[RMDB]
RNA sequence: GGGAACGACUCGAGUAGAGUCGAAAAGAUAUGGAAGAAAGGUAUGUAAUCGCAAGGGAGAUCGGCGAGUCGGAAACGACUCCGAGAUCGAGGAUCUUGCGAGUUACAUACCUUUCUUCCUAAGUCAGUUAAAUCUCUAGUUCGCUAGAGAUUUAACAAAAGAAACAACAACAACAAC
Reactivity to DMS in 0.01 (KOAc 150mM, MgCl2 10mM, bicine 150mM(pH8.5), 24C), signal-to-noise 4, nucleotides 027 to 126: g000a020u000a300u000g000g000a010a010g020a010a010a010g010g010u010a000u000g030u000a020a010u000c000g000c010a010a020g010g000g000a020g010a010u000c000g000g040c300g010a020g030u010c000g010g000a090a120a230c000g020a010c000u000c000c010g010a270g000a010u000c000g000a050g020g000a030u010c000u000u000g000c010g000a030g010u000u000a000c000a010u000a010c010c000u000u000u000c000u000u000c000c000u000a010a070g010u000c060a180